[RMDB]
RNA sequence: GGGAACGACUCGAGUAGAGUCGAAAAAGAAUUUAUCAAGGCAGGAACUCGUGUAAGAGUCUAUGAAAAAGUGAAUGGAUGGUCACGUAUUAACGCUUCUCAGUCUGACCAGUGGGUCGAAGAUAAGGCAAAUACUGGUUUUCGAACCAGUAUUUGCAAAAGAAACAACAACAACAAC
Reactivity to 2A3 in 0.01 (KOAc 150mM, MgCl2 10mM, bicine 150mM(pH8.5), 24C), signal-to-noise 1, nucleotides 027 to 126: a000g050a080a070u130u140u070a130u120c070a000a010g020g000c000a000g090g000a040a010c020u030c080g060u050g090u210a040a030g040a000g080u000c010u090a090u080g180a100a050a000a000a000g080u060g020a070a050u080g010g050a020u030g030g030u050c020a000c070g010u010a090u010u180a120a000c010g010c050u030u040c020u000c010a040g080u010c030u080g010a060c000c000a000g210u170g090g050g010u000c010g020a020a050g020a070u180a080a030g000
Reactivity to DMS in 0.01 (KOAc 150mM, MgCl2 10mM, bicine 150mM(pH8.5), 24C), signal-to-noise 2, nucleotides 027 to 126: a070g000a190a100u000u000u000a060u020c040a140a080g020g030c040a070g020g000a110a050c020u010c080g000u000g020u000a100a130g000a060g000u000c030u000a050u000g000a030a030a060a100a100g040u010g000a040a070u000g020g010a040u010g000g020u010c030a060c080g010u000a110u020u000a050a060c190g000c080u010u000c030u010c040a060g000u000c020u010g010a060c090c010a210g010u010g030g000g030u000c030g000a050a050g020a050u010a100a080g020

Notes
The data come from the RNA Mapping Database (RMDB), library OK2TRN. This 177-nucleotide RNA was probed chemically with 2A3 and DMS. Values cover nucleotides 27 to 126. Conditions: 150 mM KOAc, 10 mM MgCl2 and 150 mM bicine (pH 8.5), 24 C.